[RMDB]
The record gives the reactivity of an RNA of 177 nucleotides to DMS and 2A3. For DMS the reverse transcriptase was MarathonRT. Conditions: 150 mM KOAc, 10 mM MgCl2 and 150 mM bicine (pH 8.5), 24 C. For 2A3 the reverse transcriptase was SuperScript II with manganese. Source: RMDB library OK1LIB, as collected in RNAgym.

RNA sequence: GGGAACGACUCGAGUAGAGUCGAAAAGGCAAAGCGACCAGCAUAUUCAUGGUAGAUGAAUUUCCGACCAUCCUGUUGCAAGGCAUUGACACUUUCAUCGGAACCGCCCGGAAGCACAAUGUCGCUACCGCCCAAGAAUUUUCGAAUUCUUGGGCGGAAAAGAAACAACAACAACAAC
Reactivity to DMS in 0.01 (KOAc 150mM, MgCl2 10mM, bicine 150mM(pH8.5), 24C), signal-to-noise 1, nucleotides 027 to 126: g000g000c040a080a020a100g010c000g000a050c000c120a120g000c080a080u000a150u030u000c060a040u000g020g000u000a110g010a000u000g000a010a030u000u000u000c060c070g040a080c050c110a070u010c000c000u010g030u000u000g010c050a070a130g000g030c070a080u000u040g030a270c230a180c060u010u000u000c060a130u020c050g030g020a100a000c090c070g000c120c040c040g000g030a030a090g000c260a120c100a040a080u000g000u040c090g000c040u070a090
Reactivity to 2A3 in 0.01 (KOAc 150mM, MgCl2 10mM, bicine 150mM(pH8.5), 24C), signal-to-noise 2, nucleotides 027 to 126: g100g000c090a000a120a070g010c020g020a070c000c070a060g110c020a040u040a160u140u040c010a040u100g170g060u220a060g050a120u020g090a070a030u040u020u060c050c040g020a010c060c000a010u030c000c000u140g080u200u050g020c060a050a070g050g060c070a090u000u180g140a070c000a000c070u040u150u020c070a160u120c090g030g080a070a030c070c020g000c040c040c030g060g060a000a050g010c010a000c040a170a170u140g000u090c000g000c060u040a090